[RMDB]
RNA sequence: GGGAACGACUCGAGUAGAGUCGAAAAGUUAUUUGCGUCUCGCCUGUCAUGUCUGGUAAUUCAUAUAGAGAUCGAAAAAAGAGAUCGGUCGAAGCAUUUCUUGAUUGGAUGGACACAUUCGGAUUGCGAGACUCCGUUCCGGAUAGACGCAAAUUAGCAUGUAGUUAAGGUUCGCCUUAACUACAUGAAAAGAAACAACAACAACAAC
Reactivity to 2A3 in 0.01 (KOAc 150mM, MgCl2 10mM, bicine 150mM(pH8.5), 24C), signal-to-noise 7, nucleotides 027 to 156: g060u070u060a010u010u010u010g000c000g010u010c010u000c050g010c010c000u020g010u030c020a050u080g000u010c010u070g110g010u020a030a010u030u020c020a020u110a010u080a230g060a010g010a060u010c020g040a100a070a020a040a070a030g110a010g020a060u010c010g000g000u010c020g040a050a020g030c030a060u060u160u140c050u110u190g130a180u130u210g030g010a020u030g030g060a040c020a010c010a160u100u120c070g000g000a010u010u020g000c030g060a000g010a000c000u020c040c050g040u060u000c010c010g000g000a010u010a010g000a000c000g000c000a000a000a010u020u010a040g030
Reactivity to DMS in 0.01 (KOAc 150mM, MgCl2 10mM, bicine 150mM(pH8.5), 24C), signal-to-noise 4, nucleotides 027 to 156: g040u010u000a060u000u000u000g000c020g020u000c000u000c140g040c030c040u010g020u010c070a100u010g010u000c020u010g020g050u000a070a060u000u000c050a150u000a130u010a120g020a300g000a050u000c010g020a000a060a090a160a100a180g000a140g010a070u000c030g040g040u000c040g000a120a150g000c090a060u000u000u010c050u000u000g010a170u000u000g030g000a030u000g000g010a190c100a140c130a110u000u000c070g020g010a060u000u000g000c020g000a100g000a060c020u000c080c030g020u000u000c040c030g000g010a140u000a040g000a010c020g000c010a020a020a040u010u000a130g010